[RMDB]
An RNA of 177 nucleotides, treated with 2A3 and DMS and read out base by base. Values cover nucleotides 27 to 126. 2A3 adducts were read by reverse transcription with SuperScript II with manganese.

RNA sequence: GGGAACGACUCGAGUAGAGUCGAAAAGCUUGGUGUAGAUAUCACGACUACAAGUACUCGCCAAAAGACUUCUUCGACCAGGGGAAUCAAAUUUACAACACUGGUGAUGAUACGGCUACCGCGCUCAACUAUGUUCAUGGUUCGCCAUGAACAUAGUAAAAGAAACAACAACAACAAC
Reactivity to 2A3 in 0.01 (KOAc 150mM, MgCl2 10mM, bicine 150mM(pH8.5), 24C), signal-to-noise 5, nucleotides 027 to 126: g020c030u040u040g070g010u060g070u130a060g050a160u140a050u230c070a050c090g120a070c050u150a060c080a090a000g020u020a060c020u020c050g010c010c000a040a090a030a060g040a100c020u010u000c000u020u030c070g090a080c020c030a040g010g000g020g060a000a020u070c060a040a090a080u200u220u080a120c080a170a030c050a030c100u040g020g040u020g020a030u040g010a030u040a090c040g030g000c020u020a040c000c020g040c010g010c030u040c020a020
Reactivity to DMS in 0.01 (KOAc 150mM, MgCl2 10mM, bicine 150mM(pH8.5), 24C), signal-to-noise 6, nucleotides 027 to 126: g000c060u000u000g010g020u000g020u020a020g020a140u000a090u000c090a090c080g010a120c080u000a070c100a080a110g010u010a060c050u000c050g030c030c040a040a070a090a100g010a080c110u000u010c030u000u000c040g020a080c040c060a070g000g010g000g010a080a080u030c120a060a080a120u000u010u010a090c120a090a090c120a040c060u000g000g020u000g010a080u010g000a100u010a050c090g000g010c020u000a070c040c030g010c090g000c050u000c110a100

Source: RMDB library OK2TRN, as collected in RNAgym. The reactions ran in a buffer of 150 mM KOAc, 10 mM MgCl2 and 150 mM bicine (pH 8.5), at 24 C. DMS adducts were read by reverse transcription with MarathonRT. For DMS, 6,027 sequencing reads were counted.